RNA sequence: GGGAACGACUCGAGUAGAGUCGAAAAUCGUGAUCUUCAAAACAAAGGAGAAUGUUUGGUGGAGGCAUGCAAGACUCGACCUCCUUCAUUUUGCAAUGGCACAGGAUCAGGCCCGUGGUCAGAGGGGAUACUACGACUAUUUCGAUAGUCGUAGUAUAAAAGAAACAACAACAACAAC
Reactivity to 2A3 in 0.01 (KOAc 150mM, MgCl2 10mM, bicine 150mM(pH8.5), 24C), signal-to-noise 7, nucleotides 027 to 126: u120c040g030u040g050a070u030c020u070u040c050a020a040a090a120c050a040a080a040g060g020a060g040a100a130u110g070u090u120u100g100g010u040g010g020a020g020g030c040a030u130g030c050a120a060g030a140c020u030c090g110a160c010c020u030c010c030u030u060c020a040u020u070u080u110g030c050a050a110u070g030g000c040a010c010a080g070g000a050u050c010a000g060g000c000c000c030g050u050g000g000u030c020a020g020a040g040g010g000g000
Reactivity to DMS in 0.01 (KOAc 150mM, MgCl2 10mM, bicine 150mM(pH8.5), 24C), signal-to-noise 9, nucleotides 027 to 126: u010c080g020u000g000a050u000c020u010u000c040a050a060a080a090c150a050a070a130g000g010a060g010a100a070u000g010u000u000u000g020g010u000g010g010a160g010g010c080a070u000g020c160a080a150g000a070c040u000c050g000a100c050c020u000c020c010u000u000c060a060u000u000u000u000g010c120a040a090u000g000g010c100a070c120a070g000g000a050u010c070a060g000g010c010c020c020g020u000g010g010u000c040a080g010a090g010g000g000g010

An RNA of 177 nucleotides, treated with 2A3 and DMS and read out base by base. For DMS the reverse transcriptase was MarathonRT. The RNA was probed in 150 mM KOAc, 10 mM MgCl2 and 150 mM bicine (pH 8.5) at 24 C. DMS (dimethyl sulfate) methylates the pairing face of unpaired adenines and cytosines.